Conditions: 150 mM KOAc, 10 mM MgCl2 and 150 mM bicine (pH 8.5), 24 C. The record gives the reactivity of an RNA of 177 nucleotides to 2A3 and DMS. It was measured as part of the RMDB library OK2TST. For 2A3, 2,557 sequencing reads were counted.
[RMDB]
RNA sequence: GGGAACGACUCGAGUAGAGUCGAAAAUGGUGGUUAUAAGAACACUAGCCAGAUUCAAAUUUGACGAGUGCAUUAAGCAAUACUUCGAUGUAGUAGGACCAUCUGUAUUUUCUUGCUUGCGUGAUCAAUCACCUGGAUUAUUCGUAAUCCAGGUGAUAAAAGAAACAACAACAACAAC
Reactivity to 2A3 in 0.01 (KOAc 150mM, MgCl2 10mM, bicine 150mM(pH8.5), 24C), signal-to-noise 3, nucleotides 027 to 126: u060g000g020u030g020g000u090u080a160u030a250a110g080a160a000c010a010c040u030a040g010c030c000a010g040a060u130u110c140a110a170a160u070u080u080g030a030c090g000a010g080u080g000c020a040u040u100a080a020g000c010a040a020u010a060c020u010u120c090g090a090u030g020u090a070g020u000a020g000g070a010c000c020a030u000c020u090g030u020a100u020u050u020u010c010u040u070g040c000u030u040g020c000g100u080g060a080u090c040a020
Reactivity to DMS in 0.01 (KOAc 150mM, MgCl2 10mM, bicine 150mM(pH8.5), 24C), signal-to-noise 5, nucleotides 027 to 126: u010g010g030u000g000g000u000u010a100u010a090a110g020a150a160c040a020c020u000a090g020c010c010a020g010a060u000u010c220a060a100a120u010u000u000g010a040c020g000a050g020u000g020c070a120u010u000a040a070g020c090a070a090u000a100c040u000u000c170g020a080u000g000u000a040g000u000a070g000g010a060c040c010a020u000c030u010g010u010a070u000u010u000u000c030u000u000g010c060u000u000g000c100g010u010g000a090u000c110a110